This 207-nucleotide RNA was probed chemically with DMS and 2A3. Values cover nucleotides 27 to 156. DMS adducts were read by reverse transcription with MarathonRT. It was measured as part of the RMDB library RSTRND. Conditions: 150 mM KOAc, 10 mM MgCl2 and 150 mM bicine (pH 8.5), 24 C. The DMS profile rests on 2,386 reads.
[RMDB]
RNA sequence: GGGAACGACUCGAGUAGAGUCGAAAAGCAACAAUGGGCAAUCCGCAGCCAAGCUCCUACGGGCUGUCAAAGCCUAUGGAGAAGGUUCAGAGACUAAAUGGCAGUGGGCAAGCAUGGCAAUGCUUGCUUAAGAUAUAGUCCGUCCCAGCUGAGAAGCCACAAAGAGUCACUUCGGUGACUCUUUGUGAAAAGAAACAACAACAACAAC
Reactivity to DMS in 0.01 (KOAc 150mM, MgCl2 10mM, bicine 150mM(pH8.5), 24C), signal-to-noise 1, nucleotides 027 to 156: g050c040a050a090c100a070a150u000g000g050g110c050a080a110u000c010c000g010c100a090g000c010c010a110a160g020c020u010c050c010u000a100c120g000g020g000c010u050g010u030c190a070a100a060g020c000c000u000a060u030g000g030a130g000a060a100g050g010u020u000c000a150g010a120g010a060c020u000a040a110a120u040g020g010c060a140g010u000g010g000g000c000a010a000g000c000a040u000g010g030c240a030a170u010g000c000u000u000g010c010u000u000a030a040g010a080u000a050u000a060g030u030c010c020g010u000c030c010c020a090g000c010u000g040a130g030a060a110g000c030
Reactivity to 2A3 in 0.01 (KOAc 150mM, MgCl2 10mM, bicine 150mM(pH8.5), 24C), signal-to-noise 3, nucleotides 027 to 156: g050c050a030a100c030a130a140u110g010g000g000c040a050a110u050c020c040g030c080a020g000c010c000a020a070g020c000u010c000c000u070a090c150g010g000g000c010u090g050u300c120a180a040a000g000c000c000u050a060u170g020g000a000g000a020a020g030g000u050u070c050a040g070a020g010a100c020u080a050a150a100u080g080g020c050a050g050u070g030g000g000c010a010a000g000c020a020u050g160g020c070a160a040u000g010c000u000u000g000c000u000u010a010a000g010a010u040a020u030a140g010u010c000c000g020u010c010c010c000a000g000c010u020g020a010g000a100a000g010c010